[RMDB]
RNA sequence: GGGAACGACUCGAGUAGAGUCGAAAAGAAACAUGCAUAUAUGCUUAUUCAAGAAGCAGCAACAUGGGGGUGAUAGAGAAAUCUAUGUGUUGGGAGCAGAAGAAAGGAUAGUGCAAUCCAUCAUAGACAAACAUAGCGUUUUCGAACGCUAUGUUUGAAAAGAAACAACAACAACAAC
Reactivity to 2A3 in 0.01 (KOAc 150mM, MgCl2 10mM, bicine 150mM(pH8.5), 24C), signal-to-noise 2, nucleotides 027 to 126: g050a000a090a010c030a010u070g020c050a020u160a010u030a030u210g030c020u040u050a110u140u190c070a130a030g090a070a010g130c030a010g000c030a010a020c010a070u050g000g000g010g010g050u030g010a040u040a030g030a000g040a040a060a010u000c000u030a060u090g020u010g030u060u070g020g030g020a060g010c010a030g010a050a010g060a000a090a040g050g000a040u050a040g060u020g020c000a040a040u000c000c030a010u090c030a050u080a060g070a070
Reactivity to DMS in 0.01 (KOAc 150mM, MgCl2 10mM, bicine 150mM(pH8.5), 24C), signal-to-noise 4, nucleotides 027 to 126: g010a070a100a130c130a060u000g000c040a080u000a150u000a100u000g010c010u000u020a080u010u010c140a090a150g000a100a060g010c030a060g010c050a060a080c060a040u010g000g020g010g010g020u000g000a040u000a010g010a040g010a060a050a100u000c020u000a010u010g010u010g000u000u000g010g000g000a090g010c050a040g000a060a070g000a060a080a070g010g000a020u000a050g000u000g010c060a040a100u010c050c010a060u010c100a050u010a100g020a210